[RMDB]
RNA sequence: GGGAACGACUCGAGUAGAGUCGAAAAUUGCAUAAUGUACAGAUUAAUUAACCUUGCUGAGCCUGAGUUUUCCUUAUCAACAAACAAGAGAUUAUCUUUACCCUGCUCUCAAGGCAAGGCCAGAGCCCGUACUUAGAGCAUUCGUGCUCUAAGUACGAAAAGAAACAACAACAACAAC
Reactivity to DMS in 0.01 (KOAc 150mM, MgCl2 10mM, bicine 150mM(pH8.5), 24C), signal-to-noise 3, nucleotides 027 to 126: u000u020g010c100a080u000a070a070u010g040u020a080c140a060g000a090u000u000a100a070u000u000a100a150c030c010u000u010g000c050u000g000a200g020c100c090u000g010a110g020u000u040u010u000c030c010u000u010a100u020c100a040a110c110a040a080a080c180a030a060g020a080g010a110u010u010a050u000c030u010u000u000a100c050c050c020u000g010c040u000c050u000c080a040a130g000g000c030a030a060g000g020c110c030a100g010a160g000c050c100
Reactivity to 2A3 in 0.01 (KOAc 150mM, MgCl2 10mM, bicine 150mM(pH8.5), 24C), signal-to-noise 2, nucleotides 027 to 126: u070u070g020c020a020u090a120a080u260g030u120a040c050a050g120a080u050u170a080a120u040u140a100a100c010c000u010u000g000c040u020g020a010g000c030c010u060g020a060g000u010u030u050u050c010c000u060u090a100u140c040a060a070c020a130a110a000c020a060a020g030a000g010a040u090u050a080u150c000u010u030u070a090c030c010c000u000g000c010u010c010u020c080a020a000g040g000c010a010a010g000g010c000c000a050g010a040g030c030c030
This 177-nucleotide RNA was probed chemically with DMS and 2A3. DMS (dimethyl sulfate) methylates the pairing face of unpaired adenines and cytosines. The DMS profile rests on 1,732 reads. The data come from the RNA Mapping Database (RMDB), library OK2TST. For DMS the reverse transcriptase was MarathonRT.